[RMDB]
RNA sequence: GGGAACGACUCGAGUAGAGUCGAAAAGAUAUGGAGAGUGACGCGAUAAGACCGACUCGGAAACGAGUUAGGUCUUUUGACGCGUAACACUCUCCUAAGUCAAAACCAGUCUGUUCGCAGACUGGAACACAGCUUACUGGUUCGCCAGUAAGCUGUGAAAAGAAACAACAACAACAAC
Reactivity to 2A3 in 0.01 (KOAc 150mM, MgCl2 10mM, bicine 150mM(pH8.5), 24C), signal-to-noise 1, nucleotides 027 to 126: g010a020u060a010u070g000g000a020g000a010g000u000g010a020c020g000c030g060a140u060a130a030g000a010c000c040g000a010c020u030c020g030g000a060a050a020c010g010a000g000u010u030a080g030g020u020c010u000u010u000u000g020a010c010g000c000g000u010a070a070c000a000c000u020c000u000c000c000u000a030a000g020u020c020a030a000a070a170c000c000a000g000u010c000u030g050u010u130c300g000c110a000g010a000c000u000g000g000a010a010
Reactivity to DMS in 0.01 (KOAc 150mM, MgCl2 10mM, bicine 150mM(pH8.5), 24C), signal-to-noise 3, nucleotides 027 to 126: g020a060u000a300u010g000g030a030g020a020g080u000g010a130c010g040c010g000a240u010a020a010g010a010c020c010g020a010c000u000c000g010g000a100a080a120c010g000a000g020u000u010a010g080g000u000c000u000u000u010u010g010a240c040g040c000g020u000a080a110c000a020c000u020c000u000c000c020u010a000a070g000u000c020a120a070a160a220c000c000a010g010u000c000u000g030u010u010c290g030c000a020g000a010c000u010g000g000a040a060

The record gives the reactivity of an RNA of 177 nucleotides to 2A3 and DMS. The reactions ran in a buffer of 150 mM KOAc, 10 mM MgCl2 and 150 mM bicine (pH 8.5), at 24 C. For 2A3 the reverse transcriptase was SuperScript II with manganese. Reactivities are given for positions 27 through 126.